[RMDB]
RNA sequence: GGGAACGACUCGAGUAGAGUCGAAAAACACAGCAUGAAUUCGAGUUACAGCGGGGGGUAUGUCGGGUUUCCGGCCGGCUCGGUGCUCGAGGUGCGGACCGCCCUGUCCUAUGUGAGCGUGGACGGGGGGGCGGAAGAUUUUCGAAUCUUCCGCCCCAAAAGAAACAACAACAACAAC
Reactivity to 2A3 in 0.01 (KOAc 150mM, MgCl2 10mM, bicine 150mM(pH8.5), 24C), signal-to-noise 2, nucleotides 027 to 126: a010c090a010c040a060g060c100a090u190g090a110a160u130u040c040g080a130g110u070u280a150c010a020g000c100g000g020g000g050g000g010u040a110u090g070u000c040g030g000g140u060u080u120c090c000g000g020c000c020g070g000c030u020c010g000g190u140g000c000u000c040g020a010g000g000u120g000c010g020g000a060c000c000g000c000c000c000u000g000u000c000c040u150a090u150g210u060g130a070g160c140g000u030g020g020a020c010g000g020g000
About this RNA:
Chemical mapping of a 177-nucleotide RNA with 2A3. The data come from the RNA Mapping Database (RMDB), library OK1LIB. The reactions ran in a buffer of 150 mM KOAc, 10 mM MgCl2 and 150 mM bicine (pH 8.5), at 24 C. Values cover nucleotides 27 to 126.